Structure probing data (2A3 and DMS) for a 177-nucleotide construct. DMS adducts were read by reverse transcription with MarathonRT. The data come from the RNA Mapping Database (RMDB), library RFM100. Values cover nucleotides 27 to 126.
RNA sequence: GGGAACGACUCGAGUAGAGUCGAAAAUCCCCAAGGAUGCCAAAAACCUGAGAGAAGAAGUAGUGAGGAAGGCCAACCUUUAUUAGCGAAACUUCCUGUCGGCGGGUGUGGGGUCAAGCCAGGUCAGGGGUGACCCUUAAUUCGUUAAGGGUCACCCAAAAGAAACAACAACAACAAC
Reactivity to 2A3 in 0.01 (KOAc 150mM, MgCl2 10mM, bicine 150mM(pH8.5), 24C), signal-to-noise 2, nucleotides 027 to 126: u000c010c000c000c000a030a060g020g010a010u110g090c000c020a120a010a000a080a110c060c080u080g020a040g000a020g010a090a010g000a010a020g000u030a010g020u000g020a000g020g000a010a000g090g000c170c090a070a220c180c050u070u000u000a100u300u080a000g040c000g070a030a000a000c000u000u020c000c010u040g090u100c070g040g060c010g000g000g000u050g000u110g000g040g040g020u080c070a120a000g020c000c000a000g070g010u140c030a010g000
Reactivity to DMS in 0.01 (KOAc 150mM, MgCl2 10mM, bicine 150mM(pH8.5), 24C), signal-to-noise 3, nucleotides 027 to 126: u010c010c010c010c140a080a060g010g020a110u070g020c050c030a000a140a030a080a060c070c040u000g000a110g000a160g010a060a020g000a000a060g000u000a160g000u000g000a080g000g000a000a030g000g040c160c300a190a100c040c000u000u010u000a000u030u000a160g010c050g000a180a180a120c000u020u000c040c010u010g030u000c050g000g000c070g020g020g020u050g000u020g030g000g000g020u030c070a020a170g000c030c040a020g000g000u000c130a160g010